Overview:
The record gives the reactivity of an RNA of 177 nucleotides to DMS. The reactions ran in a buffer of 150 mM KOAc, 10 mM MgCl2 and 150 mM bicine (pH 8.5), at 24 C. For DMS, 837 sequencing reads were counted.
[RMDB]
RNA sequence: GGGAACGACUCGAGUAGAGUCGAAAAUCUUAGCGUUUCGACGCUAAGAAAACGUGGUGGAGGAGGUGGAAAGCUCGGCAUUAAAGGGAAAAAAACAUCUUCAUAUAGGGUCGUUCGCGACCCUAAAAUGUAUGCACAACUUCGGUUGUGCAUACAUAAAAGAAACAACAACAACAAC
Reactivity to DMS in 0.01 (KOAc 150mM, MgCl2 10mM, bicine 150mM(pH8.5), 24C), signal-to-noise 1, nucleotides 027 to 126: u010c000u000u000a040g010c010g030u010u010u010c170g030a050c000g000c000u020a010a000g000a010a030a100a130c140g020u000g030g020u010g010g000a100g010g020a060g030g040u000g000g000a040a090a090g000c070u000c090g000g010c050a110u010u000a010a030a170g000g000g000a000a000a060a110a080a090a090c150a080u000c100u000u000c150a070u030a170u000a020g020g000g030u000c000g050u010u000c150g070c000g000a030c000c000c010u000a000a020a060